[RMDB]
RNA sequence: GGGAACGACUCGAGUAGAGUCGAAAAGAGAAGUUUGACACCCAAAUUCAAAUUGGUGUUAGGGGAGCUGGGGCCUUUCAAAAGAGAGCUUUGUAGAGGCAUUCUUUUUGACUACUUUUCUCUAGCGGCAUUAUAAACAGUUCGCUGUUUAUAAUGCAAAAGAAACAACAACAACAAC
Reactivity to 2A3 in 0.01 (KOAc 150mM, MgCl2 10mM, bicine 150mM(pH8.5), 24C), signal-to-noise 2, nucleotides 027 to 126: g010a000g020a090a100g020u100u130u100g010a020c000a000c000c060c020a030a070a030u280u210c050a040a060a160u080u050g000g000u020g010u030u030a020g000g010g010g020a040g030c030u040g020g030g060g000c010c000u070u080u080c050a040a050a010a000g070a010g000a010g020c000u100u100u160g190u170a100g010a060g060g000c010a030u050u050c010u040u100u040u060u090g020a020c000u090a070c000u110u080u060u050c020u000c010u010a000g070c070g060
Reactivity to DMS in 0.01 (KOAc 150mM, MgCl2 10mM, bicine 150mM(pH8.5), 24C), signal-to-noise 2, nucleotides 027 to 126: g000a150g010a130a090g000u000u000u010g010a050c070a060c030c020c150a070a070a130u020u000c180a070a100a150u000u000g000g010u010g000u000u000a040g010g000g000g010a110g030c080u010g010g010g010g010c070c070u000u000u000c080a020a020a040a040g000a090g000a080g000c030u000u000u010g020u040a120g020a060g020g000c010a030u000u000c010u000u000u000u000u000g000a050c190u010a050c050u000u010u000u000c000u000c050u010a070g040c160g020